[RMDB]
RNA sequence: GGGAACGACUCGAGUAGAGUCGAAAACCUACUCAAUACGUCCUCGUCGUACAGAACGAUAACAUGUUUUCCGAACAUCCGCGCUUGGGUAUACGAGUAUACACCUUACCCAACCCUCGCCAACGGGAGUGCAUCCACGAGUUCGCUCGUGGAUGAACCUUGUGGGAUGUUUCGACAUCCCACAAGGAAAAGAAACAACAACAACAAC
Reactivity to DMS in 0.01 (KOAc 150mM, MgCl2 10mM, bicine 150mM(pH8.5), 24C), signal-to-noise 1, nucleotides 027 to 156: c050c010u010a040c010u000c000a090a130u000a110c100g020u000c010c020u010c030g010u020c090g000u000a290c070a160g000a130a110c010g020a150u000a050a110c120a110u000g010u000u000u000u000c070c000g000a080a100c020a070u010c000c040g010c030g040c000u000u010g000g000g100u010a020u000a100c100g000a070g010u000a050u000a070c090a150c100c070u000u020a100c000c010c010a070a070c040c000c010u000c140g010c050c030a090a040c070g000g000g000a160g030u000g010c010a030u010c010c000a000c000g000a070g040u000u000c300g010c000u020c010g080u000g000g020a000u000g000a040a120
Reactivity to 2A3 in 0.01 (KOAc 150mM, MgCl2 10mM, bicine 150mM(pH8.5), 24C), signal-to-noise 4, nucleotides 027 to 156: c010c000u020a020c030u030c020a020a120u070a170c020g050u050c000c010u030c010g050u020c020g030u090a070c020a100g090a190a010c020g070a110u100a100a040c070a090u090g050u020u060u070u030c030c020g010a040a030c020a100u050c030c020g030c000g010c060u030u010g040g000g010u060a080u030a100c120g020a030g060u010a030u040a070c140a110c040c030u040u030a030c010c000c000a020a030c020c000c000u030c020g020c020c030a050a040c030g010g000g030a030g060u060g020c000a000u000c010c000a000c000g000a000g010u070u060c170g050c060u000c010g000u010g010g000a000u000g000a000a020
An RNA of 207 nucleotides, treated with DMS and 2A3 and read out base by base. The RNA was probed in 150 mM KOAc, 10 mM MgCl2 and 150 mM bicine (pH 8.5) at 24 C. It was measured as part of the RMDB library M2RFPK.